[RMDB]
RNA sequence: GGGAACGACUCGAGUAGAGUCGAAAAGCUCUGGAAUUGAGGCCCCUCUAACAAUAAUCCAAAACUACUUCGCAGACUAAUCUGCCGAAUCGUAGGAUGCCCAUUACUAUCUAUUUUUGGAGCAUCUAAAACUGUCAGUGCUUCGGCACUGACAGAAGUUACAUGCUCCCUUCGGGGAGCAUGUAACAAAAGAAACAACAACAACAAC
Reactivity to 2A3 in 0.01 (KOAc 150mM, MgCl2 10mM, bicine 150mM(pH8.5), 24C), signal-to-noise 1, nucleotides 027 to 156: g000c010u000c050u050g110g020a230a080u110u080g030a040g000g020c000c000c030c010u040c080u100a160a120c050a080a130u170a010a100u040c020c030a050a000a000a090c010u000a000c000u010u040c020g000c010a000g030a050c040u130a100a220u080c000u020g100c070c030g030a000a020u080c030g010u040a010g050g000a000u000g000c000c000c000a020u070u000a050c030u070a080u140c030u060a300u090u080u020u040u000g050g000a150g020c020a000u000c010u070a020a060a050a120c000u000g000u010c000a000g000u000g010c020u000u000c040g070g000c000a000c000u000g010a000c000a000g000a010a000